Structure probing data (DMS and 2A3) for a 207-nucleotide construct. The RNA was probed in 150 mM KOAc, 10 mM MgCl2 and 150 mM bicine (pH 8.5) at 24 C. Reactivities are rounded to 0.1 and cut off at 0 and 3. Source: RMDB library ARCHII, as collected in RNAgym. For 2A3 the reverse transcriptase was SuperScript II with manganese. For DMS, 3,852 sequencing reads were counted.
RNA sequence: GGGAACGACUCGAGUAGAGUCGAAAAUCUGAUGUGGGCAUGUUUCUGAGCUGCCCAGUCCAAGCUGUGAGUAAUUAGUGUUGAGUUGAGCGAAGGCUUGGCUCAUGCAGGUUCUAGAGUCGGAGGGUAAUGCGUGAGGCUGGCUUCACAGAGCAGCGUUAACAAGUCUGUUCGCAGACUUGUUAACAAAAGAAACAACAACAACAAC
Reactivity to DMS in 0.01 (KOAc 150mM, MgCl2 10mM, bicine 150mM(pH8.5), 24C), signal-to-noise 2, nucleotides 027 to 156: u010c030u000g000a120u010g010u000g020g020g030c020a080u010g010u000u010u050c070u020g000a170g080c060u010g020c020c000c010a080g010u020c030c040a060a180g000c020u000g000u020g020a130g040u020a080a030u000u000a100g030u000g020u000u000g010a060g030u000u000g010a030g030c000g030a180a160g030g050c000u000u000g030g000c020u000c030a040u000g010c000a120g010g040u000u000c050u010a070g020a110g040u010c020g000g000a090g000g040g030u010a050a080u000g010c010g040u000g030a080g020g040c000u000g010g010c060u020u000c000a110c090a100g010a110g000c010a060g010c070
Reactivity to 2A3 in 0.01 (KOAc 150mM, MgCl2 10mM, bicine 150mM(pH8.5), 24C), signal-to-noise 4, nucleotides 027 to 156: u030c040u100g020a050u070g060u090g080g030g020c050a050u100g050u020u110u000c070u110g080a040g000c020u010g010c030c000c000a000g010u010c010c000a030a020g020c030u030g030u070g090a040g030u160a150a120u130u170a090g050u040g020u060u040g010a020g020u020u020g020a030g030c050g050a130a010g140g000c000u020u030g010g000c010u000c000a010u040g030c000a000g000g060u090u070c050u110a040g000a020g110u080c060g030g030a050g020g030g010u070a100a030u100g040c040g020u050g010a050g020g000c000u030g020g010c010u100u110c040a030c010a020g050a010g030c030a000g000c010